The record gives the reactivity of an RNA of 177 nucleotides to 2A3 and DMS. For DMS the reverse transcriptase was MarathonRT.
RNA sequence: GGGAACGACUCGAGUAGAGUCGAAAACGCGCCGGUAUGAUUGCUCCUGAUGCAACGACUUUUGAAUAUGUUAAAAACCGCCCUCUUGCUCCCAAGGGCGAUGAUUGGGAACAGGCCGUGGCUUAUAAUUAGUGAUAGCUUUCGAGCUAUCACUAAUAAAAGAAACAACAACAACAAC
Reactivity to 2A3 in 0.01 (KOAc 150mM, MgCl2 10mM, bicine 150mM(pH8.5), 24C), signal-to-noise 2, nucleotides 027 to 126: c010g000c050g010c030c030g010g030u180a060u170g200a240u170u160g000c000u030c040c000u040g020a020u070g050c020a030a030c050g090a040c000u120u100u130u090g040a110a080u160a120u250g060u050u100a100a050a010a020a030c020c010g000c000c000c020u010c030u030u130g020c030u010c000c020c000a020a000g010g010g000c000g000a020u030g000a020u000u040g010g000g000a040a000c020a010g100g010c010c010g010u020g000g000c010u250u140a130u040a230
Reactivity to DMS in 0.01 (KOAc 150mM, MgCl2 10mM, bicine 150mM(pH8.5), 24C), signal-to-noise 4, nucleotides 027 to 126: c090g020c100g030c050c020g020g020u000a060u010g000a120u000u000g020c030u010c020c030u000g020a050u000g010c090a060a160c180g010a050c030u010u000u010u010g000a090a100u010a060u010g000u010u000a060a080a090a120a050c120c020g020c000c010c000u010c040u000u010g000c050u000c000c000c010a170a030g000g000g010c010g020a010u000g000a090u010u000g010g010g000a050a050c040a060g000g000c050c030g030u010g000g010c030u000u000a060u010a100
About this RNA:
For 2A3, 2,152 sequencing reads were counted. For DMS, 4,780 sequencing reads were counted. The reactions ran in a buffer of 150 mM KOAc, 10 mM MgCl2 and 150 mM bicine (pH 8.5), at 24 C.